Notes: The record gives the reactivity of an RNA of 177 nucleotides to 2A3. The RNA was probed in 150 mM KOAc, 10 mM MgCl2 and 150 mM bicine (pH 8.5) at 24 C. 2A3 adducts were read by reverse transcription with SuperScript II with manganese. For 2A3, 743 sequencing reads were counted. It was measured as part of the RMDB library OK1LIB. Reactivities are given for positions 27 through 126.
[RMDB]
RNA sequence: GGGAACGACUCGAGUAGAGUCGAAAAGCUAGCAAGUGGUGCCGAUGCGCGCUAAGGCACCACAGCCACCGAUGACCUGUAAGGUGGCAAACAGGUCAGCUAAGAAAAGCGCGCACGCGAAAGCGGACAUGCGAUCACCGUUCGCGGUGAUCGCAUGAAAAGAAACAACAACAACAAC
Reactivity to 2A3 in 0.01 (KOAc 150mM, MgCl2 10mM, bicine 150mM(pH8.5), 24C), signal-to-noise 1, nucleotides 027 to 126: g020c040u080a090g090c060a210a040g000u000g010g000u000g000c000c000g000a040u190g000c000g000c000g000c000u020a000a000g000g020c000a000c000c000a000c000a000g010c020c000a020c010c010g110a150u070g020a040c080c000u000g050u030a100a000g070g010u020g090g000c010a000a000a000c000a000g040g040u040c020a010g000c030u120a130a160g120a040a130a050a000g010c000g000c000g060c000a000c000g000c000g070a190a000a000g000c000g000g020a020